[RMDB]
RNA sequence: GGGAACGACUCGAGUAGAGUCGAAAAAUUUAUCUGCCGAGUUUGCCUUUCGGCAAACGUCGCAUUAUUAUAUGUGCUUUUUCACUUCGUUGCAAAAGCACGGAAAAAACUUUUUUCGGAAGCUGAGCUACCCAUUUAGGUUCGCCUAAAUGGGUAGAAAAGAAACAACAACAACAAC
Reactivity to DMS in 0.01 (KOAc 150mM, MgCl2 10mM, bicine 150mM(pH8.5), 24C), signal-to-noise 1, nucleotides 027 to 126: a070u000u000u000a070u000c180u000g030c070c000g010a230g010u000u000u000g010c010c010u000u000u000c270g000g000c000a000a000a010c040g040u000c110g020c010a040u010u000a060u000u000a150u000a130u020g010u000g000c000u010u000u000u000u000c020a030c000u010u010c240g010u020u000g000c080a020a000a010a010g000c000a000c010g000g010a010a040a060a090a110a080c070u000u000u000u000u000u010c060g020g010a080a090g000c090u000g010a110g000
Reactivity to 2A3 in 0.01 (KOAc 150mM, MgCl2 10mM, bicine 150mM(pH8.5), 24C), signal-to-noise 1, nucleotides 027 to 126: a000u060u050u010a070u100c040u010g280c190c090g000a010g010u000u000u000g010c000c010u300u300u300c280g000g140c020a030a020a000c000g020u000c000g000c000a000u090u090a090u200u100a130u130a010u220g000u010g000c030u000u000u040u000u110c000a020c010u140u170c280g270u300u000g000c000a000a000a000a000g000c000a010c030g000g010a000a140a000a000a020a050c090u170u090u000u070u030u050c030g060g000a070a020g010c060u080g000a090g000